[RMDB]
About this RNA: An RNA of 207 nucleotides, treated with 2A3 and read out base by base. 2A3 adducts were read by reverse transcription with SuperScript II with manganese. The RNA was probed in 150 mM KOAc, 10 mM MgCl2 and 150 mM bicine (pH 8.5) at 24 C.
RNA sequence: GGGAACGACUCGAGUAGAGUCGAAAAGUGAAAGCUUCUUCUCUCGCAAUGUGUAACUCAUGAUUCUCAUGACCCCUGGUUGGAGAGAUCCGGACUAGGAGCCAGGGGGCCUCUGAUUCUGCCAGCCAAAACUGUCGUAAGUUCGCUUACGACAGAACAGACGGUCAUGAUUCGUCAUGACCGUCUGAAAAGAAACAACAACAACAAC
Reactivity to 2A3 in 0.01 (KOAc 150mM, MgCl2 10mM, bicine 150mM(pH8.5), 24C), signal-to-noise 2, nucleotides 027 to 156: g040u080g020a050a050a050g050c040u090u000c030u060u050c040u050c040u000c010g000c100a120a100u170g090u030g010u130a100a040c030u020c040a040u020g070a200u160u050c060u020c040a020u110g050a110c000c000c000c000u040g010g010u010u060g020g020a050g020a020g020a140u030c020c030g100g130a140c040u110a090g020g000a050g010c000c000a020g000g000g000g000g000c000c010u060c010u060g050a130u100u020c000u060g040c050c050a040g020c020c020a080a070a070a110c040u000g000u000c000g000u000a000a000g000u060u120c150g040c170u000u000a000c000g000a000c000a000g010a000a000